[RMDB]
RNA sequence: GGGAACGACUCGAGUAGAGUCGAAAAGAUAUGGACUAACACUUAGGUCCUGGCCCAGCAACAGCUCCUGGGUCGGAAACGACCCGGAGACAUGCUGAUGACAGGACCUAAGUGUUAGUCCUAAGUCCGUCAUACCAUAGUUCGCUAUGGUAUGACGAAAAGAAACAACAACAACAAC
Reactivity to DMS in 0.01 (KOAc 150mM, MgCl2 10mM, bicine 150mM(pH8.5), 24C), signal-to-noise 2, nucleotides 027 to 126: g000a070u000a300u010g010g010a010c000u000a000a000c000a010c000u000u000a020g000g010u000c010c000u000g000g020c020c170c010a010g000c020a020a070c300a230g000c000u020c000c000u020g040g010g020u010c010g000g010a140a100a180c010g000a000c010c000c000g000g000a030g000a030c070a110u010g000c000u000g010a080u000g010a060c020a030g030g000a010c010c000u000a000a000g010u000g000u000u000a000g000u000c000c010u010a020a050g010u000c030
Chemical mapping of a 177-nucleotide RNA with DMS.
Conditions: 150 mM KOAc, 10 mM MgCl2 and 150 mM bicine (pH 8.5), 24 C.
Values cover nucleotides 27 to 126.
The DMS profile rests on 3,166 reads.